[RMDB]
RNA sequence: GGGAACGACUCGAGUAGAGUCGAAAAGAUAUGGAGUACGUAACAUCCACUCAGGCGAAGAACUCGGAAACGAGGGAGCCUGAGUGGUGGUACUCCUAAGUCAAACCUCGUGGUUCGCCACGAGGAACAUUAUACCGUACUUCGGUACGGUAUAAUGAAAAGAAACAACAACAACAAC
Reactivity to DMS in 0.01 (KOAc 150mM, MgCl2 10mM, bicine 150mM(pH8.5), 24C), signal-to-noise 8, nucleotides 027 to 126: g010a040u010a300u010g000g000a010g020u000a000c010g010u000a030a050c150a040u010c000c000a000c000u000c000a010g000g010c000g000a090a150g010a100a210c000u000c000g000g000a100a100a190c010g000a010g000g010g000a090g010c000c000u010g010a000g010u000g000g010u000g000g000u000a000c000u000c000c010u000a000a060g010u000c030a080a120a190c000c000u000c000g030u000g000g010u000u010c220g010c010c000a000c000g000a010g000g000a020a050
Reactivity to 2A3 in 0.01 (KOAc 150mM, MgCl2 10mM, bicine 150mM(pH8.5), 24C), signal-to-noise 8, nucleotides 027 to 126: g040a020u070a050u180g000g010a000g010u010a000c010g020u020a050a030c030a300u070c010c000a000c000u010c000a000g000g010c010g160a300a030g000a090a040c000u000c010g010g050a090a070a050c010g000a010g010g000g020a010g000c000c000u000g000a000g000u000g000g000u010g000g000u000a000c000u000c000c000u010a100a010g040u010c040a060a040a170c000c000u000c000g010u010g010g080u050u100c300g040c100c000a000c010g000a000g000g000a000a000